[RMDB]
RNA sequence: GGGAACGACUCGAGUAGAGUCGAAAAAGUUGAGCGAUUUACUUCGGUAAAGAGCGGCGGACGGGUGAGUAACGCGUGGGUAACCUACCCUGUACACACGGAUAACAUACCGAAAGGUAUGCUAAUACCUAUAUAUGGGCUUCGGCCCAUAUAUAGGAAAAGAAACAACAACAACAAC
Reactivity to 2A3 in 0.01 (KOAc 150mM, MgCl2 10mM, bicine 150mM(pH8.5), 24C), signal-to-noise 5, nucleotides 027 to 126: a000g130u100u110g040a070g030c020g000a030u050u020u000a040c010u020u060c220g040g000u020a040a060a010g020a000g010c010g010g030c010g020g030a030c020g010g030g010u060g040a090g020u090a090a050c030g000c040g060u050g000g020g010u020a040a010c000c000u050a100c010c000c030u030g080u100a020c070a000c000a020c050g030g000a030u080a180a060c010a010u000a010c000c000g040a040a020a010g000g000u010a010u000g000c000u020a090a050u080a160
Reactivity to DMS in 0.01 (KOAc 150mM, MgCl2 10mM, bicine 150mM(pH8.5), 24C), signal-to-noise 5, nucleotides 027 to 126: a120g000u010u000g010a100g020c060g000a220u020u000u010a030c020u000u040c130g000g010u010a020a020a020g000a190g070c040g000g000c040g000g000a100c110g000g030g010u010g000a130g020u030a070a070c080g010c070g010u030g000g010g000u000a020a110c080c040u000a160c010c010c000u010g020u000a050c070a040c060a020c040g000g000a110u010a070a160c000a020u000a000c000c000g000a070a100a130g000g000u000a000u010g010c070u010a060a110u020a170